[RMDB]
RNA sequence: GGGAACGACUCGAGUAGAGUCGAAAAUGUACCGUUCGCGGUACAAAAAAGAUAUGGACGAGGACGGGACUUGGAUUUACUAAGUAUGUCGGAAACGACAUAUAUGUUGUCAGUCCCGGUACUCGUCCUAAGUCAAAAAUGGCUGUUCGCAGCCAAACUGGAUAUAUGAGUUCGCUCAUAUAUCCAGAAAAGAAACAACAACAACAAC
Reactivity to DMS in 0.01 (KOAc 150mM, MgCl2 10mM, bicine 150mM(pH8.5), 24C), signal-to-noise 2, nucleotides 027 to 156: u020g030u010a020c010c010g040u000u000c300g020c040g020g000u000a000c000a000a050a060a100a110a090g010a100u000a230u020g000g000a070c000g020a080g000g010a210c000g010g000g000a030c000u010u000g020g010a120u010u000u010a090c020u000a080a210g010u020a000u010g010u000c000g000g000a170a090a300c000g020a010c010a000u000a010u000a270u000g010u000u000g020u000c000a070g030u010c000c010c000g060g010u000a050c010u010c000g000u000c000c010u000a010a070g000u010c030a050a090a070a120a160u010g000g020c010u000g010u010u000c240g030c010a020g000c010c030a000a030a060
Reactivity to 2A3 in 0.01 (KOAc 150mM, MgCl2 10mM, bicine 150mM(pH8.5), 24C), signal-to-noise 4, nucleotides 027 to 156: u100g000u000a000c010c010g010u030u060c300g010c030g070g010u030a020c030a000a090a010a000a000a020g050a030u080a030u080g010g000a000c000g000a010g010g010a010c010g000g010g010a000c000u080u140g110g010a060u210u300u090a020c000u020a160a090g020u010a000u010g000u000c000g000g050a070a090a060c000g000a000c000a000u000a000u000a000u020g010u000u010g010u000c000a000g010u000c010c010c010g000g000u030a010c000u000c000g000u000c000c000u000a000a000g000u000c000a000a000a020a050a050u100g000g000c000u030g040u080u100c260g000c090a000g000c000c010a020a000a010
Structure probing data (DMS and 2A3) for a 207-nucleotide construct. The RNA was probed in 150 mM KOAc, 10 mM MgCl2 and 150 mM bicine (pH 8.5) at 24 C. It was measured as part of the RMDB library RNAMAK. DMS adducts were read by reverse transcription with MarathonRT. For 2A3, 5,950 sequencing reads were counted.